[RMDB]
RNA sequence: GGGAACGACUCGAGUAGAGUCGAAAAUACCGUCGUAGUCUUAACCAUAAACUAUGCCGACUAGAGAUAGGAAAACGUCAUGCUUGACUUCUCCUGCACCUUAUGAGAAACCAAAGUCUUUGGGUUCUGGGGGGAGUAUGGUCGCAAGGCUGAAACUCUUACCCAUGGUGUUCGCACCAUGGGUAAGAAAAGAAACAACAACAACAAC
Reactivity to 2A3 in 0.01 (KOAc 150mM, MgCl2 10mM, bicine 150mM(pH8.5), 24C), signal-to-noise 1, nucleotides 027 to 156: u060a000c000c000g070u060c110g050u060a000g020u030c040u080u000a020a020c050c000a100u200a080a050a040c040u110a090u120g020c020c020g000a030c000u040a030g010a000g060a210u140a100g170g000a030a150a040a030c060g000u000c000a030u080g040c030u050u100g050a110c040u010u010c000u000c020c010u020g000c000a020c020c000u020u130a080u300g070a050g020a100a070a010c170c000a190a110a000g140u090c000u020u050u060g060g040g010u110u000c030u060g030g050g040g000g000g000a000g000u020a010u120g000g000u010c030g000c150a000a000g000g020c000u020g020a040a020a020c010u020